[RMDB]
RNA sequence: GGGAACGACUCGAGUAGAGUCGAAAAGACGAAGCGUGCCGAAAGGCACGUGGAGGUCUGCUAGCGUUGGUGUCCUACAAUACCCUCGCGUGACCUAUGUCUAGGGGUGAAAGGCCCAUCGAAUCCGGUUAGGGUAGAGCUUCGGCUCUACCCUAACAAAAGAAACAACAACAACAAC
Reactivity to DMS in 0.01 (KOAc 150mM, MgCl2 10mM, bicine 150mM(pH8.5), 24C), signal-to-noise 1, nucleotides 027 to 126: g010a020c020g010a300a300g000c010g000u000g100c000c000g000a060a020a200g050g000c010a000c000g010u000g000g000a300g010g000u000c010u000g000c140u000a150g030c080g000u000u000g000g020u000g020u010c000c110u000a090c090a140a020u010a090c080c000c000u000c140g020c100g000u000g010a070c040c180u000a160u000g000u010c010u000a100g000g000g000g060u000g000a030a140a130g000g000c000c000c010a010u000c060g000a100a180u000c010c000g010
Description
The record gives the reactivity of an RNA of 177 nucleotides to DMS. DMS adducts were read by reverse transcription with MarathonRT.